[RMDB]
RNA sequence: GGGAACGACUCGAGUAGAGUCGAAAAGAUAUGGAAUGCGUACCAGCCGAGGAUCUUAGUCGGAAACGACUAAGGGAGGCUGUACCAUUCCUAAGUCAAAACAGCGAGUACUUCGGUACUCGCUGAACCAGUCUUGCAAGUUCGCUUGCAAGACUGGAAAAGAAACAACAACAACAAC
Reactivity to 2A3 in 0.01 (KOAc 150mM, MgCl2 10mM, bicine 150mM(pH8.5), 24C), signal-to-noise 1, nucleotides 027 to 126: g010a010u080a040u140g020g000a000a010u020g050c160g080u000a020c130c130a100g000c000c030g140a300g030g030a000u040c000u000u000a000g010u040c010g050g000a070a050a070c000g010a000c010u000a000a000g000g000g000a000g030g000c010u030g020u010a000c010c000a000u010u030c000c000u000a040a000g040u060c020a000a010a160a220c000a010g020c000g010a030g000u030a020c000u050u220c300g080g000u000a000c000u040c000g040c010u020g010a000a010
Reactivity to DMS in 0.01 (KOAc 150mM, MgCl2 10mM, bicine 150mM(pH8.5), 24C), signal-to-noise 1, nucleotides 027 to 126: g000a020u010a300u030g010g010a040a000u010g010c300g000u000a030c300c300a040g000c000c020g010a070g030g040a030u000c000u010u010a000g010u000c010g000g020a120a090a200c000g010a010c000u000a000a000g000g000g000a030g000g010c020u000g030u010a010c000c000a010u000u010c000c000u000a000a080g010u000c140a130a060a210a250c000a010g000c000g010a000g000u010a010c000u010u010c140g030g000u000a000c000u000c000g050c000u000g000a010a190